[RMDB]
RNA sequence: GGGAACGACUCGAGUAGAGUCGAAAACGUCACAGACAUCACGCCAAAAAACAAAAAUGCCAAAUACGGAGGCGCCAAUCACGACGACCAGCGCACCGUCACGUCUCCGCGAAACUGACGGCAGCCACGCCUAAUAAUACUUCGGUAUUAUUAGGCGAAAAGAAACAACAACAACAAC
Reactivity to DMS in 0.01 (KOAc 150mM, MgCl2 10mM, bicine 150mM(pH8.5), 24C), signal-to-noise 4, nucleotides 027 to 126: c070g020u010c030a050c090a060g020a090c050a050u010c080a080c090g000c030c060a010a040a090a060a030a090c150a040a050a060a060a090u000g010c050c030a080a040a120u010a090c060g000g010a050g020g020c030g000c160c100a060a070u020c180a080c180g010a060c040g000a080c040c040a100g000c090g010c050a060c070c000g010u000c010a140c090g010u000c000u000c020c030g020c090g000a050a060a030c120u000g010a050c050g010g000c090a050g020c070c060a110
Reactivity to 2A3 in 0.01 (KOAc 150mM, MgCl2 10mM, bicine 150mM(pH8.5), 24C), signal-to-noise 4, nucleotides 027 to 126: c030g030u020c000a010c030a150g060a020c010a050u070c020a040c040g040c020c020a040a100a020a000a050a060c100a020a140a050a030a030u100g000c010c020a050a100a000u140a040c040g000g030a020g010g030c000g010c020c020a060a070u160c050a010c150g060a010c010g020a030c020c040a040g040c010g020c050a030c030c010g000u030c010a010c030g020u000c010u000c030c020g030c030g060a110a040a030c060u050g050a030c040g030g000c010a010g000c000c000a040

Conditions: 150 mM KOAc, 10 mM MgCl2 and 150 mM bicine (pH 8.5), 24 C. The record gives the reactivity of an RNA of 177 nucleotides to DMS and 2A3. It was measured as part of the RMDB library OK2TST. Values cover nucleotides 27 to 126. The DMS profile rests on 2,860 reads. For 2A3, 5,678 sequencing reads were counted.